[RMDB]
RNA sequence: GGGAACGACUCGAGUAGAGUCGAAAAGAUAUGGAGUUUGCAACAGCCAUACUGGGUCGGAAACGACCUUAUGGACAUGCAACUCCUAAGUCAAAGGUUAGCUCCAUGUUCGCAUGGAGCUAACCAACUACUACUUAAGCUUCGGCUUAAGUAGUAGAAAAGAAACAACAACAACAAC
Reactivity to 2A3 in 0.01 (KOAc 150mM, MgCl2 10mM, bicine 150mM(pH8.5), 24C), signal-to-noise 5, nucleotides 027 to 126: g010a010u070a050u130g010g010a030g030u110u260u140g090c030a100a110c060a190g080c010c000a010u030a100c210u210g060g000g010u020c000g010g060a050a070a070c010g010a000c000c000u000u000a000u000g000g020a040c040a080u040g000c000a000a000c000u010c000c000u010a080a030g030u040c060a130a070a040g000g010u000u000a000g000c000u000c010c000a010u030g040u070u120c300g030c150a000u000g000g000a000g000c000u000a000a000c000c000a000a000
Reactivity to DMS in 0.01 (KOAc 150mM, MgCl2 10mM, bicine 150mM(pH8.5), 24C), signal-to-noise 7, nucleotides 027 to 126: g010a050u000a300u000g000g000a020g010u010u000u010g030c010a030a070c300a170g000c000c000a000u000a010c300u010g010g020g010u000c000g000g000a080a090a190c000g010a010c000c000u000u000a000u000g000g000a060c090a180u000g000c000a000a020c000u000c000c000u000a010a070g010u000c020a060a110a120g000g000u000u000a000g000c000u000c000c000a010u000g000u000u020c220g010c010a000u000g000g010a010g010c000u000a000a000c000c000a020a040